[RMDB]
An RNA of 207 nucleotides, treated with 2A3 and DMS and read out base by base. For DMS the reverse transcriptase was MarathonRT. Conditions: 150 mM KOAc, 10 mM MgCl2 and 150 mM bicine (pH 8.5), 24 C. It was measured as part of the RMDB library RNAMAK. For 2A3 the reverse transcriptase was SuperScript II with manganese. Values are in units of 0.01, from 0 to 300, in steps of 10.
RNA sequence: GGGAACGACUCGAGUAGAGUCGAAAAGCUUAUUCGUAAGCCACCUUUCCUAAGUCAGCGACGAAUGCUCUUUGUCAGCUGAAUAUCGGAAACGAUAUUACCAGCUUGGAUUUAAGAGCACUAUCGCUGAUAUGGAGCAGUCAAAGUUCGCUUUGAACUACCACGAUACUUUCGAGUAUCGUGGUAGAAAAGAAACAACAACAACAAC
Reactivity to 2A3 in 0.01 (KOAc 150mM, MgCl2 10mM, bicine 150mM(pH8.5), 24C), signal-to-noise 6, nucleotides 027 to 156: g010c000u010u030a010u090u200c280g120u060a020a010g010c010c010a100c030c010u080u080u060c020c000u070a160a060g030u010c010a000g010c000g020a020c030g090a300a280u020g000c000u010c000u000u010u010g010u010c000a000g010c010u010g020a000a000u000a000u010c020g010g040a030a050a030c020g000a000u000a010u030u080a130c080c020a030g030c040u140u230g190g010a070u220u210u250a020a000g000a000g000c000a010c010u010a010u000c000g000c000u000g000a000u000a010u040g000g000a010g050c110a060g090u080c060a090a050a000g040u100u160c210g060c090u030u050u070g040a070a040
Reactivity to DMS in 0.01 (KOAc 150mM, MgCl2 10mM, bicine 150mM(pH8.5), 24C), signal-to-noise 2, nucleotides 027 to 156: g000c010u020u000a080u000u000c220g010u010a040a050g030c000c040a180c070c060u010u000u010c020c010u000a060a290g000u000c010a020g010c000g010a010c030g010a050a030u000g010c010u000c010u000u000u000g040u000c010a050g000c000u010g010a090a030u000a010u010c010g010g000a210a190a290c030g000a030u000a010u010u000a200c220c040a000g030c020u000u000g000g010a070u000u000u000a000a040g010a040g000c010a010c030u000a080u000c030g050c000u000g020a010u010a250u010g000g000a050g050c050a050g000u000c040a040a100a190g000u000u000c160g030c000u000u040u000g010a150a230